This 177-nucleotide RNA was probed chemically with 2A3 and DMS. The data come from the RNA Mapping Database (RMDB), library M2PK90. The DMS profile rests on 7,490 reads. For DMS the reverse transcriptase was MarathonRT.
RNA sequence: GGGAACGACUCGAGUAGAGUCGAAAAGCAACGGGAGGGAGGCCGGAAGCGCGAACCGGCCAAACGCGCACCAUGGAAAGAGCACAAAAAGAAGUUGAAGUGCUCACAACUUCACCCUCCGAACAAAAACUGAUAACUAAUUCGUUAGUUAUCAGUUAAAAGAAACAACAACAACAAC
Reactivity to 2A3 in 0.01 (KOAc 150mM, MgCl2 10mM, bicine 150mM(pH8.5), 24C), signal-to-noise 5, nucleotides 027 to 126: g030c020a020a110c110g070g010g000a010g000g020g010a050g000g000c000c010g020g030a100a020g070c050g020c030g120a040a040c000c020g020g010c020c010a020a020a010c030g000c020g000c020a030c030c020a080u090g050g030a080a130a060g020a020g010c060a020c040a050a150a030a010a020g160a100a040g050u090u090g060a140a030g010u010g020c000u000c000a020c000a020a010c020u070u050c010a060c000c000c000u000c000c020g000a030a020c030a020a050a000
Reactivity to DMS in 0.01 (KOAc 150mM, MgCl2 10mM, bicine 150mM(pH8.5), 24C), signal-to-noise 6, nucleotides 027 to 126: g020c040a070a090c150g010g020g010a040g010g000g020a170g010g010c010c010g010g000a090a060g030c090g010c060g010a090a170c010c000g000g030c010c010a010a030a060c100g030c060g020c040a160c040c050a100u000g010g010a090a050a110g000a030g010c010a030c030a030a090a070a080a070g000a080a060g010u000u010g000a160a110g010u000g000c010u000c020a100c060a030a090c060u010u010c050a110c010c010c000u000c000c020g000a070a070c130a060a050a040